[RMDB]
An RNA of 177 nucleotides, treated with 2A3 and read out base by base. For 2A3 the reverse transcriptase was SuperScript II with manganese. It was measured as part of the RMDB library RFM100. Conditions: 150 mM KOAc, 10 mM MgCl2 and 150 mM bicine (pH 8.5), 24 C. The 2A3 profile rests on 840 reads. 2A3 is a SHAPE reagent: it acylates the 2'-hydroxyl of flexible nucleotides of all four kinds. Values cover nucleotides 27 to 126.

RNA sequence: GGGAACGACUCGAGUAGAGUCGAAAAACGCGUUACGACGCGAAAGGGUUCUCCAUUAAGGUGGGUGGAAUAGUAUAACAAUAUAAAAUGUGUUGUUAUAGUAUUCCACCUUCCCUGAUGUCCCUAACUCCAGAGUCGGAUUCGUCCGACUCUGGAGAAAAGAAACAACAACAACAAC
Reactivity to 2A3 in 0.01 (KOAc 150mM, MgCl2 10mM, bicine 150mM(pH8.5), 24C), signal-to-noise 2, nucleotides 027 to 126: a000c000g020c020g000u000u050a040c300g080a000c010g130c010g040a050a060a010g040g020g000u040u070c050u020c070c000a000u090u080a030a000g000g000u010g000g000g000u000g000g000a020a000u000a020g280u000a000u000a010a010c000a000a000u040a000u080a070a190a190a130u300g040u010g020u020u000g000u000u000a000u000a010g090u000a000u000u000c000c000a010c000c000u000u000c000c000c000u000g000a000u000g000u020c000c000c000u010a080a050